[RMDB]
This 177-nucleotide RNA was probed chemically with DMS and 2A3. Conditions: 150 mM KOAc, 10 mM MgCl2 and 150 mM bicine (pH 8.5), 24 C. The DMS profile rests on 5,225 reads.

RNA sequence: GGGAACGACUCGAGUAGAGUCGAAAAAACAAUUUUUUUUUGCGCGUGUGAAGUGUGAAAUCCUCAUGAGAACUCAAAAUUUACCACAAUAAUACUCAUUAUGCAAUGUGCUUUGAGUGGGGAGGGCACCGAAUCAGAUUUUCGAAUCUGAUUCGGUAAAAGAAACAACAACAACAAC
Reactivity to DMS in 0.01 (KOAc 150mM, MgCl2 10mM, bicine 150mM(pH8.5), 24C), signal-to-noise 3, nucleotides 027 to 126: a100a090c220a100a070u040u010u000u000u000u000u000u000u010g020c070g010c040g000u020g010u040g000a090a110g020u010g000u030g010a040a050a040u010c000c010u010c030a090u000g000a140g000a090a040c010u020c120a010a040a040a080u000u000u000a110c180c050a060c130a070a060u000a030a020u020a130c130u020c050a020u010u000a050u020g030c150a070a060u010g000u000g010c220u000u010u000g000a060g000u000g040g000g000g010a030g000g000g010c120
Reactivity to 2A3 in 0.01 (KOAc 150mM, MgCl2 10mM, bicine 150mM(pH8.5), 24C), signal-to-noise 5, nucleotides 027 to 126: a000a000c200a120a030u200u060u020u010u000u020u020u060u060g070c090g000c050g000u130g040u030g040a100a180g020u030g020u030g080a020a060a030u030c010c000u030c030a050u110g090a030g030a160a030c020u000c050a030a070a090a130u120u130u110a130c060c040a050c040a070a040u120a070a040u050a060c020u030c080a060u070u080a060u130g050c060a080a130u130g050u080g050c030u030u000u030g000a010g000u010g000g020g030g000a050g010g010g020c080